[RMDB]
RNA sequence: GGGAACGACUCGAGUAGAGUCGAAAAGAUAUGGACCCUUAACGGGAGAUCACGGUGACGUUUGACGUCGAUCGGAAACGAUCGACCGAGUCACCCGUGAUCAUCGAUCGUUAAGGGUCCUAAGUCACACUUGGCAAAUCUUCGGAUUUGCCAAGUGAAAAGAAACAACAACAACAAC
Reactivity to DMS in 0.01 (KOAc 150mM, MgCl2 10mM, bicine 150mM(pH8.5), 24C), signal-to-noise 1, nucleotides 027 to 126: g020a030u000a280u000g010g000a020c000c000c000u000u000a010a000c000g000g010g020a020g020a000u000c000a000c030g000g050u010g030a000c020g030u050u020u000g000a230c300g010u000c000g000a000u000c000g010g000a160a050a150c000g020a010u000c000g010a000c020c020g000a040g000u020c000a010c080c110c070g000u000g000a020u000c000a100u000c250g010a030u020c010g020u000u000a000a000g030g000g000u000c000c000u000a000a000g010u000c020a300
An RNA of 177 nucleotides, treated with DMS and read out base by base. Source: RMDB library TTRINS, as collected in RNAgym. The reactions ran in a buffer of 150 mM KOAc, 10 mM MgCl2 and 150 mM bicine (pH 8.5), at 24 C. For DMS, 1,224 sequencing reads were counted.